This 207-nucleotide RNA was probed chemically with 2A3.
The reactions ran in a buffer of 150 mM KOAc, 10 mM MgCl2 and 150 mM bicine (pH 8.5), at 24 C.
It was measured as part of the RMDB library OK3TST.
For 2A3 the reverse transcriptase was SuperScript II with manganese.
[RMDB]
RNA sequence: GGGAACGACUCGAGUAGAGUCGAAAAAAAGGUGAACAACAGAGAUACACCUGCAUUGCACACUAUACCUUUGGCAGAAUCCACUGGCAACUUUAAUGUCUCCAUUGGCACACGUGCAAAGUCAUUAUGGUGGUUCUUCUAGGUUCAUAGUGAUUCACCCUCACUCAUACUUCGGUAUGAGUGAGGGAAAAGAAACAACAACAACAAC
Reactivity to 2A3 in 0.01 (KOAc 150mM, MgCl2 10mM, bicine 150mM(pH8.5), 24C), signal-to-noise 2, nucleotides 027 to 156: a000a000a000g080g020u030g050a050a040c080a020a020c020a130g090a000g040a070u080a090c020a020c020c050u020g010c040a100u090u110g010c000a000c000a000c060u140a040u100a190c000c000u040u020u040g010g020c200a000g030a020a010u110c080c010a060c020u030g070g000c080a080a120c040u000u190u170a130a060u170g060u060c000u030c110c040a050u080u030g030g010c040a010c010a000c050g010u030g040c000a000a110a060g090u040c020a090u060u200a060u190g050g050u020g020g030u010u010c020u040u040c000u000a030g030g030u040u010c050a020u040a030g050u090g010a050u030u020c010a050